[RMDB]
RNA sequence: GGGAACGACUCGAGUAGAGUCGAAAAAAAAAGUAAUAAUUGGGUGUUGUGUUCUCACAAAGAAAGAUGGAAAAGUUUAACAAAAACUUGUGAAGGAAGAUGAAUGCUUUGAUUAUGCAUGAAUCCAAUGAUCAGAUUAAUUCGUUAAUCUGAUCAUAAAAGAAACAACAACAACAAC
Reactivity to 2A3 in 0.01 (KOAc 150mM, MgCl2 10mM, bicine 150mM(pH8.5), 24C), signal-to-noise 3, nucleotides 027 to 126: a000a000a000a000a000g210u250a150a190u090a110a060u090u080g040g100g030u030g010u030u090g000u000g050u080u000c010u050c030a010c000a010a050a100g140a050a030a010g090a050u130g080g040a090a110a020a090g050u020u020u160a150a020c070a000a090a010a000a010c010u010u000g020u000g030a030a100g070g020a000a050g040a010u030g060a090a000u030g000c000u060u120u030g110a110u100u160a070u240g000c020a000u030g000a030a020u020c010c010a010
Reactivity to DMS in 0.01 (KOAc 150mM, MgCl2 10mM, bicine 150mM(pH8.5), 24C), signal-to-noise 6, nucleotides 027 to 126: a040a030a050a060a060g010u030a080a050u020a060a120u020u000g000g000g010u000g010u000u000g010u010g000u010u010c070u000c020a030c030a030a020a040g000a080a060a060g010a110u010g010g010a080a060a040a060g020u000u010u010a080a100c180a050a040a020a030a020c030u000u000g010u000g010a050a070g010g000a050a050g000a060u000g000a090a000u000g010c010u010u010u010g020a100u020u020a040u020g010c020a020u000g000a120a050u000c010c070a090